RNA sequence: GGGAACGACUCGAGUAGAGUCGAAAAUAAGCAAAAGACAACCACCUUUCCCGCUGACAAUAGCGUUAUCCCUCUGCACUUCGGUAAUAUGAGGGCACAGUAAAUCCCGCAAGGAUGAGAAUGUGAUAGUCCUCUCAAUUUUCGAAUUGAGAGGACUAAAAGAAACAACAACAACAAC
Reactivity to DMS in 0.01 (KOAc 150mM, MgCl2 10mM, bicine 150mM(pH8.5), 24C), signal-to-noise 2, nucleotides 027 to 126: u060a130a070g000c210a040a050a060a100g000a060c080a100a130c000c000a170c020c010u000u000u000c020c000c030g040c050u000g040a070c190a150a080u050a100g000c150g000u000u000a140u050c020c000c020u000c020u010g000c120a050c000u000u060c090g000g000u000a020a180u120a080u040g010a000g000g000g010c030a010c010a030g000u000a050a100a000u060c000c000c050g060c300a150a270g000g060a000u000g000a080g000a120a010u000g000u000g000a150u030
Reactivity to 2A3 in 0.01 (KOAc 150mM, MgCl2 10mM, bicine 150mM(pH8.5), 24C), signal-to-noise 2, nucleotides 027 to 126: u180a030a000g040c040a030a050a030a000g040a100c030a020a000c060c030a010c010c010u000u000u030c000c010c000g000c080u040g020a060c040a160a250u080a060g040c030g030u140u100a140u110c000c000c010u040c010u000g030c040a040c020u040u050c170g080g020u100a040a060u160a120u300g000a000g000g010g000c000a000c000a010g010u040a000a030a000u000c030c000c000g150c050a050a100g000g000a000u050g000a000g020a000a030u000g000u000g000a000u060

Structure probing data (DMS and 2A3) for a 177-nucleotide construct. The reactions ran in a buffer of 150 mM KOAc, 10 mM MgCl2 and 150 mM bicine (pH 8.5), at 24 C. For 2A3 the reverse transcriptase was SuperScript II with manganese. It was measured as part of the RMDB libraries RFM100 and RFMREP.